[RMDB]
RNA sequence: GGGAACGACUCGAGUAGAGUCGAAAAGAGCCGGUGGGACCAGAUGAGGAUGAGGAUUUCCACAUGACGGACGACAUAGACCCCAAGAUCGUGUCUGAUGCUGUGUCUGUGGAAGAGGCGUGGCAACUCUACAAGAGGGUGAGAGUCUGCUGUGGGGAAAGUAAAUCACAUUCGUGUGAUUUACUUUAAAAGAAACAACAACAACAAC
Reactivity to DMS in 0.01 (KOAc 150mM, MgCl2 10mM, bicine 150mM(pH8.5), 24C), signal-to-noise 3, nucleotides 027 to 156: g000a130g050c030c020g030g050u000g010g010g010a110c050c030a130g000a100u000g010a110g000g000a080u000g000a120g000g000a170u020u000u000c010c030a040c020a040u020g030a040c000g000g010a090c040g000a020c020a050u000a070g010a050c010c010c040c040a100a170g010a090u000c030g000u010g030u000c020u000g010a050u000g010c010u010g000u010g020u000c010u000g010u000g000g020a050a050g020a080g030g030c060g030u010g030g020c040a040a050c020u010c020u000a060c070a070a160g010a090g000g030g020u000g010a110g010a100g010u010c040u000g000c000u000g000u010g000g010g010g000
Reactivity to 2A3 in 0.01 (KOAc 150mM, MgCl2 10mM, bicine 150mM(pH8.5), 24C), signal-to-noise 9, nucleotides 027 to 156: g070a010g050c040c040g010g030u080g010g030g020a050c040c040a070g020a150u090g030a060g050g010a040u060g030a040g050g010a040u040u030u020c020c010a020c020a040u290g020a020c010g030g020a010c020g010a000c010a010u060a050g020a030c020c020c020c080a070a070g050a190u180c060g020u040g040u080c030u070g100a070u050g020c040u040g040u030g000u120c010u000g010u010g010g010a010a010g020a020g010g020c040g000u020g010g000c010a010a070c020u020c010u070a080c040a140a050g030a060g080g050g000u080g030a060g000a000g030u050c090u050g020c020u030g030u060g010g000g000g010

Background: Conditions: 150 mM KOAc, 10 mM MgCl2 and 150 mM bicine (pH 8.5), 24 C. This 207-nucleotide RNA was probed chemically with DMS and 2A3. The DMS profile rests on 7,876 reads. Values are in units of 0.01, from 0 to 300, in steps of 10. DMS adducts were read by reverse transcription with MarathonRT.